An RNA of 177 nucleotides, treated with DMS and 2A3 and read out base by base. For DMS, 952 sequencing reads were counted. It was measured as part of the RMDB library OK2TRN. Reactivities are rounded to 0.1 and cut off at 0 and 3.
RNA sequence: GGGAACGACUCGAGUAGAGUCGAAAAGUACAUUAUAAACUGAAAAAGCACACGACAUGCAGAGGGAAAGGGUAAAUGACCAUGUGUGUCCUGCUCGGCUGAAGUCCACAUCACAUGACUGAGAUGAUCUGUUGAGUACGUUCGCGUACUCAACAGAAAAAGAAACAACAACAACAAC
Reactivity to DMS in 0.01 (KOAc 150mM, MgCl2 10mM, bicine 150mM(pH8.5), 24C), signal-to-noise 2, nucleotides 027 to 126: g030u010a060c070a040u010u050a100u010a040a100a130c020u000g000a090a050a140a130a100g010c030a040c130a050c210g020a040c120a040u000g000c010a040g000a100g010g000g020a060a100a060g000g010g020u010a050a130a060u010g050a120c030c010a050u000g020u000g020u010g000u000c010c030u040g000c040u020c140g040g020c040u000g000a090a050g030u000c060c060a140c040a040u000c040a090c080a050u010g030a060c130u000g000a060g010a070u010g010a100
Reactivity to 2A3 in 0.01 (KOAc 150mM, MgCl2 10mM, bicine 150mM(pH8.5), 24C), signal-to-noise 1, nucleotides 027 to 126: g020u030a000c040a070u020u190a210u220a180a140a010c060u020g050a010a120a110a000a000g060c070a070c000a020c060g030a010c020a040u020g030c000a010g060a300g000g040g020a050a050a030g100g030g060u160a040a210a110u090g020a040c010c050a030u030g000u020g000u000g030u020c000c000u010g010c010u000c060g050g110c000u020g060a050a010g050u090c050c040a040c010a040u110c010a030c010a070u140g070a090c060u070g010a010g070a170u210g040a060